[RMDB]
This 177-nucleotide RNA was probed chemically with 2A3 and DMS.
DMS (dimethyl sulfate) methylates the pairing face of unpaired adenines and cytosines.
Conditions: 150 mM KOAc, 10 mM MgCl2 and 150 mM bicine (pH 8.5), 24 C.
The data come from the RNA Mapping Database (RMDB), library OK1LIB.

RNA sequence: GGGAACGACUCGAGUAGAGUCGAAAAUGUGUGACACACGACGAUGGUAAAGCGUUCUAUUCAGAACUCAAGAGCCCCACGAAACGCCAUCUAGUUAUUGGGACAUCCGGAGAGCCAAAAUACAUUGCCACUCAGUAGUUUUCGAACUACUGAGUGGAAAAGAAACAACAACAACAAC
Reactivity to 2A3 in 0.01 (KOAc 150mM, MgCl2 10mM, bicine 150mM(pH8.5), 24C), signal-to-noise 6, nucleotides 027 to 126: u090g040u020g040u060g050a030c050a000c000a000c160g100a010c050g020a070u030g010g050u130a110a060a020g070c060g030u020u000c020u030a150u100u210c110a020g020a090a020c010u010c120a070a080g010a020g130c000c000c000c000a050c030g070a080a070a000c060g000c010c000a010u020c020u010a020g040u020u070a130u090u130g030g010g010a020c030a050u020c030c030g020g020a070g000a020g050c000c000a020a070a060a000u160a070c080a110u100u250g090
Reactivity to DMS in 0.01 (KOAc 150mM, MgCl2 10mM, bicine 150mM(pH8.5), 24C), signal-to-noise 3, nucleotides 027 to 126: u030g030u000g000u020g010a160c090a110c020a090c100g020a130c100g000a060u010g000g040u000a040a140a150g000c180g000u020u000c040u010a110u020u040c180a030g000a060a080c000u000c150a110a100g000a150g020c000c000c000c020a110c100g000a010a070a070c110g010c010c020a020u020c080u000a120g010u000u000a080u020u030g000g020g000a080c100a030u000c010c040g030g030a110g000a100g000c020c060a050a060a020a110u000a080c210a070u000u060g000